Record summary
An RNA of 177 nucleotides, treated with DMS and 2A3 and read out base by base. Values cover nucleotides 27 to 126. 2A3 adducts were read by reverse transcription with SuperScript II with manganese. As a SHAPE reagent, 2A3 marks flexible, mostly unpaired nucleotides at the ribose 2'-OH. The RNA was probed in 150 mM KOAc, 10 mM MgCl2 and 150 mM bicine (pH 8.5) at 24 C. For DMS the reverse transcriptase was MarathonRT. The DMS profile rests on 2,553 reads.

[RMDB]
RNA sequence: GGGAACGACUCGAGUAGAGUCGAAAACCCCCCAUGUUCGCAUGGGGGGAAAGAACGCUAAUUCGCUAACCGAGGCCGCGCGCGCGGCAAUACGCGAAGAAAAAAGCCAACUGUUCGCAGUUGGCAACAAAUAGACAAGGUUCGCCUUGUCUAUUUGAAAAGAAACAACAACAACAAC
Reactivity to DMS in 0.01 (KOAc 150mM, MgCl2 10mM, bicine 150mM(pH8.5), 24C), signal-to-noise 4, nucleotides 027 to 126: c000c000c000c000c000c000a010u000g000u000u010c140g040c000a000u000g010g000g030g010g010g000a000a020a040g020a170a120c150g010c140u010a060a130u000u000c010g020c010u000a120a220c190c110g000a130g000g000c010c010g000c040g000c300g000c300g000c000g010g000c010a050a050u010a050c300g010c010g000a030a050g010a010a010a090a090a080a120g020c010c000a000a010c000u000g000u000u010c230g030c010a020g000u000u000g000g000c000a010a020
Reactivity to 2A3 in 0.01 (KOAc 150mM, MgCl2 10mM, bicine 150mM(pH8.5), 24C), signal-to-noise 2, nucleotides 027 to 126: c020c000c010c000c000c010a010u010g040u040u040c210g000c160a010u010g000g000g000g010g000g020a000a020a030g070a060a000c060g000c140u080a060a110u050u010c000g000c020u020a080a110c000c070g060a110g170g000c010c010g080c030g070c090g160c060g000c000g090g000c000a010a020u170a100c110g010c020g000a010a060g080a010a110a000a010a010a000g000c010c000a010a000c000u010g030u060u070c200g010c100a000g000u000u000g000g000c000a010a000